[RMDB]
RNA sequence: GGGAACGACUCGAGUAGAGUCGAAAAAGCUCCAGAGCCAGCCAAUCACUUAGCUCCUCAUAACAAGUCUAACUGGCUCUGGAAAGCUGAAAGGGCUGCACUGGAACAACACAGAUGAGAUAUUCUACUAGAUAUAGGUCUUCGGACCUAUAUCUAGAAAAGAAACAACAACAACAAC
Reactivity to DMS in 0.01 (KOAc 150mM, MgCl2 10mM, bicine 150mM(pH8.5), 24C), signal-to-noise 1, nucleotides 027 to 126: a030g030c010u000c000c000a000g000a020g030c000c010a000g040c120c060a070a200u010c170a030c040u000u000a120g010c020u020c040c090u000c150a040u040a160a110c080a040a010g000u000c010u020a190a300c020u000g020g010c000u000c000u010g010g010a010a010a040g030c000u010g010a050a080a160g010g000g000c000u000g020c030a060c030u020g000g020a040a030c050a080a070c040a050c040a030g020a040u010g000a030g000a180u000a090u000u000c030u000a180

The record gives the reactivity of an RNA of 177 nucleotides to DMS. The reactions ran in a buffer of 150 mM KOAc, 10 mM MgCl2 and 150 mM bicine (pH 8.5), at 24 C. It was measured as part of the RMDB library RFMREP. DMS adducts were read by reverse transcription with MarathonRT. Reactivities are rounded to 0.1 and cut off at 0 and 3.